Chemical mapping of a 207-nucleotide RNA with 2A3 and DMS. DMS adducts were read by reverse transcription with MarathonRT. The 2A3 profile rests on 8,264 reads. Reactivities are rounded to 0.1 and cut off at 0 and 3. The RNA was probed in 150 mM KOAc, 10 mM MgCl2 and 150 mM bicine (pH 8.5) at 24 C.
[RMDB]
RNA sequence: GGGAACGACUCGAGUAGAGUCGAAAAUAGGCGAACGAGAGGCCCUCUCCUGUGCGGAGUUGUCACGCUGACACAAUUGUUAUGAUGUCCGAUUCCGGUAGCAUCGCGGCGAUGAUUUCAUAGGACAUCUUAUGAACCCAAGUGCUUCGGGGAAGCAAUAAUAUACCUGAUUCGUCAGGUAUAUUAUAAAAGAAACAACAACAACAAC
Reactivity to 2A3 in 0.01 (KOAc 150mM, MgCl2 10mM, bicine 150mM(pH8.5), 24C), signal-to-noise 8, nucleotides 027 to 156: u110a020g000g010c020g010a040a030c050g010a070g020a020g150g030c010c010c000u010c000u010c000c010u110g040u110g030c070g020g010a040g020u070u050g040u060c010a010c080g030c040u050g060a010c020a000c010a130a170u110u070g060u100u110a080u150g020a020u010g030u000c010c010g030a070u130u070c050c020g040g020u030a030g040c020a030u040c050g010c050g120g030c070g030a040u040g020a040u050u140u140c070a060u080a050g000g020a030c010a030u020c010u020u030a090u050g050a030a040c010c000c020a070a030g050u030g030c020u020u070c030g050g000g010g020a000a000g020c030a020
Reactivity to DMS in 0.01 (KOAc 150mM, MgCl2 10mM, bicine 150mM(pH8.5), 24C), signal-to-noise 7, nucleotides 027 to 156: u000a080g020g020c020g020a090a080c050g010a100g010a130g010g010c030c040c030u000c030u000c010c020u010g010u000g000c060g010g020a160g020u000u000g010u000c030a100c080g030c040u000g010a130c040a070c050a080a160u000u000g020u000u000a100u000g000a060u000g020u000c010c020g000a250u010u000c080c030g020g020u000a080g020c030a050u000c030g020c080g020g020c080g000a090u000g000a090u000u000u000c030a100u000a110g000g000a060c060a050u000c010u000u000a080u000g010a070a090c040c020c030a070a100g020u000g000c020u000u000c030g010g010g040g010a080a070g020c040a100